[RMDB]
RNA sequence: GGGAACGACUCGAGUAGAGUCGAAAAGAUAUGGACGUGUCCAGGGAGUCGCUCGGAAACGAGACGACGAAGAACUGGCACGUCCUAAGUCAAAAUCUUCUGAACGGCUUCGGCCGUUCAGAAGAAACGAUGUAGUUAUCUUCGGAUAACUACAUCGAAAAGAAACAACAACAACAAC
Reactivity to DMS in 0.01 (KOAc 150mM, MgCl2 10mM, bicine 150mM(pH8.5), 24C), signal-to-noise 3, nucleotides 027 to 126: g010a030u000a300u000g000g000a010c010g010u000g000u010c010c010a020g000g000g010a120g010u010c000g010c000u000c000g010g000a090a100a170c000g010a010g000a160c010g020a010c000g000a080a080g020a160a170c000u010g000g000c010a010c000g010u000c000c000u010a010a050g000u000c010a080a070a140a090u000c000u000u000c010u000g000a000a000c030g010g000c000u000u010c240g020g010c000c000g020u000u000c010a000g010a010a010g000a010a060a090
Reactivity to 2A3 in 0.01 (KOAc 150mM, MgCl2 10mM, bicine 150mM(pH8.5), 24C), signal-to-noise 1, nucleotides 027 to 126: g020a000u060a020u150g000g000a000c000g000u010g080u150c010c010a000g020g010g020a050g000u000c000g010c010u010c010g030g050a070a040a030c040g000a020g210a300c010g000a000c030g040a060a030g030a010a020c000u000g000g000c020a000c000g000u000c000c000u000a010a000g000u000c010a020a030a000a270u010c000u000u000c010u000g000a010a000c010g010g000c010u110u200c300g160g030c000c000g000u020u000c000a000g000a000a000g000a000a000a000
Structure probing data (DMS and 2A3) for a 177-nucleotide construct. It was measured as part of the RMDB library TTRDEL. For 2A3 the reverse transcriptase was SuperScript II with manganese. The RNA was probed in 150 mM KOAc, 10 mM MgCl2 and 150 mM bicine (pH 8.5) at 24 C. As a SHAPE reagent, 2A3 marks flexible, mostly unpaired nucleotides at the ribose 2'-OH. The DMS profile rests on 4,590 reads.